[RMDB]
About this RNA
The data come from the RNA Mapping Database (RMDB), library M2RFPK. An RNA of 207 nucleotides, treated with 2A3 and read out base by base. Reactivities are given for positions 27 through 156. For 2A3 the reverse transcriptase was SuperScript II with manganese. The reactions ran in a buffer of 150 mM KOAc, 10 mM MgCl2 and 150 mM bicine (pH 8.5), at 24 C.
RNA sequence: GGGAACGACUCGAGUAGAGUCGAAAAAGCCGAGGACUACGGUCCUCGGCAACAACCGUCACAACGGCUUCCUGGCGUGACGGGGUUAACCCCAACGGAGCAAGUGCGAGCUUACGAGCUCCCACAAUUUAGGAGAAUUCCUUCGGGAAUUCUCCAAGUACGAAUUUAACUUCGGUUAAAUUCGUACAAAAGAAACAACAACAACAAC
Reactivity to 2A3 in 0.01 (KOAc 150mM, MgCl2 10mM, bicine 150mM(pH8.5), 24C), signal-to-noise 2, nucleotides 027 to 156: a030g000c000c000g000a010g000g020a000c030u030a020c300g050g010u010c010c020u000c000g000g060c000a000a000c000a000a000c000c000g000u000c000a000c010a050a030c060g060g050c010u190u130c040c050u090g020g060c010g000u000g000a010c010g000g000g000g000u150u200a110a090c000c000c000c000a050a070c080g060g010a010g000c040a060a120g020u010g030c050g020a000g000c000u070u070a080c180g080a020g000c000u010c040c100c040a020c000a080a200u250u300u280a100g000g010a010g000a000a000u000u000c010c020u010u100c250g070g000g030a010a000u000u000c000u000c000c010a000a000